About this RNA:
Chemical mapping of a 177-nucleotide RNA with 2A3. For 2A3 the reverse transcriptase was SuperScript II with manganese. 2A3 is a SHAPE reagent: it acylates the 2'-hydroxyl of flexible nucleotides of all four kinds. For 2A3, 355 sequencing reads were counted. The RNA was probed in 150 mM KOAc, 10 mM MgCl2 and 150 mM bicine (pH 8.5) at 24 C.
RNA sequence: GGGAACGACUCGAGUAGAGUCGAAAAAAUUGACUGAUUUCGACUUUGUUGAUUUGCCAGCGGUUGAUCAAUACAGACAUAUGAUUAAGGCACAGCCGAAACAGAAGUUGGACUUGUCAAUUCAGACCGACUGUGUUUCCUUCGGGAAACACAGUCGAAAAGAAACAACAACAACAAC
Reactivity to 2A3 in 0.01 (KOAc 150mM, MgCl2 10mM, bicine 150mM(pH8.5), 24C), signal-to-noise 1, nucleotides 027 to 126: a000a020u030u000g040a010c010u140g050a160u000u090u000c000g000a000c010u000u010u050g000u000u050g020a210u220u000u040g020c050c080a000g050c150g100g050u070u070g070a040u080c000a020a000u030a200c010a000g080a000c050a130u090a130u300g040a040u070u010a160a000g000g000c050a000c000a100g000c000c000g120a050a020a010c040a040g130a050a000g000u000u000g000g000a000c000u000u030g000u020c000a000a000u000u000c010a010g090a030c010